The data come from the RNA Mapping Database (RMDB), library M2PK50. Structure probing data (DMS and 2A3) for a 177-nucleotide construct. For DMS, 5,226 sequencing reads were counted. The reactions ran in a buffer of 150 mM KOAc, 10 mM MgCl2 and 150 mM bicine (pH 8.5), at 24 C. 2A3 adducts were read by reverse transcription with SuperScript II with manganese. Reactivities are given for positions 27 through 126.

[RMDB]
RNA sequence: GGGAACGACUCGAGUAGAGUCGAAAAAUCCUGGCAUUCGUGCCAGGAUGUUUACCGAGAAAGACCCUCGGUAUAAAAGGGCAACCCUUGGAAACAAGGGAAUAAUCGCAGUGUUCGCACUGCGAAAAGUACCGAAACAAUUCGUUGUUUCGGUACUAAAAGAAACAACAACAACAAC
Reactivity to DMS in 0.01 (KOAc 150mM, MgCl2 10mM, bicine 150mM(pH8.5), 24C), signal-to-noise 4, nucleotides 027 to 126: a040u000c000c000u000g010g000c000a030u000u000c180g040u000g010c000c000a010g000g000a000u000g000u000u000u000a040c000c000g000a040g010a090a100a100g020a120c030c020c000u000c010g010g020u000a020u010a040a050a100a080g000g010g000c150a110a110c000c000c000u000u010g000g000a160a090a190c000a010a010g000g010g000a070a050u010a080a090u000c010g000c010a010g010u000g010u000u000c210g030c000a010c000u000g000c000g000a000a020a030
Reactivity to 2A3 in 0.01 (KOAc 150mM, MgCl2 10mM, bicine 150mM(pH8.5), 24C), signal-to-noise 2, nucleotides 027 to 126: a000u000c000c000u010g000g010c000a020u010u060c180g100u060g010c000c000a000g000g000a000u000g000u010u060u000a020c010c020g010a020g050a040a220a020g150a060c030c000c000u000c000g000g000u020a010u070a010a020a000a020g050g030g030c030a050a080c000c000c000u010u000g030g000a020a030a030c010a000a000g010g000g020a000a020u080a010a000u020c000g000c000a010g000u000g020u050u030c140g040c070a010c000u010g000c000g000a000a000a000